Structure probing data (2A3 and DMS) for a 177-nucleotide construct. For DMS the reverse transcriptase was MarathonRT.

RNA sequence: GGGAACGACUCGAGUAGAGUCGAAAAAGGGUAUUCACCACUGUUUGCUCAAGCAAGGUCACCAGUUCACGCACACCGAGUUUACGGCGUUUCAGGUUAAGCAACACAUACAUCACCUGUUGCCCCGCGAAACUAGUGUAUUCGUACACUAGUUUCGAAAAGAAACAACAACAACAAC
Reactivity to 2A3 in 0.01 (KOAc 150mM, MgCl2 10mM, bicine 150mM(pH8.5), 24C), signal-to-noise 4, nucleotides 027 to 126: a000g070g000g020u080a120u070u130c050a040c060c010a050c080u040g070u060u080u070g020c020u040c060a070a060g020c010a020a070g050g010u030c010a010c060c010a010g030u070u060c060a040c060g010c000a030c020a010c040c030g020a030g040u100u150u080a030c020g000g000c030g020u000u070u100c030a020g000g040u060u080a080a020g040c020a050a050c030a010c010a080u170a090c030a080u080c040a030c040c000u010g040u050u030g010c000c000c000c000g040
Reactivity to DMS in 0.01 (KOAc 150mM, MgCl2 10mM, bicine 150mM(pH8.5), 24C), signal-to-noise 8, nucleotides 027 to 126: a070g010g010g000u010a060u000u010c050a080c050c040a120c110u010g010u000u000u000g020c040u000c080a100a110g020c080a080a070g010g010u010c050a070c040c030a060g000u010u000c070a060c070g000c060a070c070a070c020c030g010a120g010u000u000u000a080c080g000g010c080g000u000u000u000c050a070g020g000u000u000a070a090g010c040a020a020c050a050c110a090u000a060c120a060u010c100a060c050c040u000g010u000u000g000c010c010c000c070g020
For DMS, 12,335 sequencing reads were counted.
For 2A3, 6,287 sequencing reads were counted.
2A3 adducts were read by reverse transcription with SuperScript II with manganese.